[RMDB]
RNA sequence: GGGAACGACUCGAGUAGAGUCGAAAAGAAAGGCGCGCCUGACAUCUAAAUGGAGUUGCCGCGAGGCCCUCUUACGUCGAGAUCCUGGGAGACGAUCGCCGCCUGUUGGCAGGUCAGUCCACAGAAAGGGUAAUGUAAUCUUCGGAUUACAUUACCCAAAAGAAACAACAACAACAAC
Reactivity to DMS in 0.01 (KOAc 150mM, MgCl2 10mM, bicine 150mM(pH8.5), 24C), signal-to-noise 4, nucleotides 027 to 126: g000a070a050a120g010g030c010g000c090g010c010c000u000g000a100c150a050u010c080u000a060a090a130u060g010g000a080g000u020u070g000c040c030g000c090g000a120g000g010c010c150c020u010c010u010u030a060c100g000u010c060g000a070g000a080u010c010c020u010g000g030g010a160g000a050c050g000a060u000c050g000c050c040g010c060c060u010g020u030u010g000g040c030a110g000g020u000c030a130g000u000c030c040a150c040a040g000a080a120a080
Reactivity to 2A3 in 0.01 (KOAc 150mM, MgCl2 10mM, bicine 150mM(pH8.5), 24C), signal-to-noise 3, nucleotides 027 to 126: g080a010a020a030g000g000c020g000c010g040c010c020u060g040a070c000a140u090c040u180a120a100a120u240g050g000a030g010u060u070g090c000c000g060c040g010a060g000g000c000c000c040u000c000u050u090a090c060g050u010c030g020a000g010a090u040c000c000u050g000g020g020a060g030a030c050g040a040u010c010g010c030c020g020c010c000u080g050u110u190g030g000c030a040g010g000u030c010a020g040u030c010c030a080c000a030g140a040a110a060